The data come from the RNA Mapping Database (RMDB), library TTRDEL. Chemical mapping of a 177-nucleotide RNA with 2A3 and DMS. Reactivities are given for positions 27 through 126. The RNA was probed in 150 mM KOAc, 10 mM MgCl2 and 150 mM bicine (pH 8.5) at 24 C.
[RMDB]
RNA sequence: GGGAACGACUCGAGUAGAGUCGAAAAGAUAUGGAGUAUUGAUCUUGGAUUUAGUUUACUAUUCGGAAACGAACGAAUAAACUUGUCAGAUUGAUACUCCUAAGUCAAAGGCUUGUUCGCAAGCCAAGCUUACUUACAGCUUCGGCUGUAAGUAAGCAAAAGAAACAACAACAACAAC
Reactivity to 2A3 in 0.01 (KOAc 150mM, MgCl2 10mM, bicine 150mM(pH8.5), 24C), signal-to-noise 2, nucleotides 027 to 126: g020a000u060a010u180g000g010a000g020u000a000u000u010g030a010u000c050u060u230g090g040a070u300u300u160a020g000u030u010u050a080c080u020a040u050u010c020g040g040a110a110a030c020g030a020a010c060g040a120a300u020a020a020a000c000u020u020g000u000c000a000g000a030u020u000g020a000u010a010c000u000c000c000u000a020a000g010u000c070a160a000a030g000g000c010u020u000g020u070u110c160g030c190a020a000g000c000c030a010a000
Reactivity to DMS in 0.01 (KOAc 150mM, MgCl2 10mM, bicine 150mM(pH8.5), 24C), signal-to-noise 2, nucleotides 027 to 126: g000a070u010a300u000g010g010a030g020u000a000u000u000g000a000u010c000u020u000g000g000a010u000u000u000a000g010u000u000u000a000c060u020a300u000u000c000g000g000a150a080a180c030g000a010a010c150g010a030a090u000a000a010a020c000u000u000g000u000c010a030g010a020u000u000g000a010u000a000c000u010c000c000u000a000a080g000u000c050a120a110a110g020g000c000u000u000g010u000u000c240g030c030a010a020g000c020c000a010a060

Source information: Values are in units of 0.01, from 0 to 300, in steps of 10.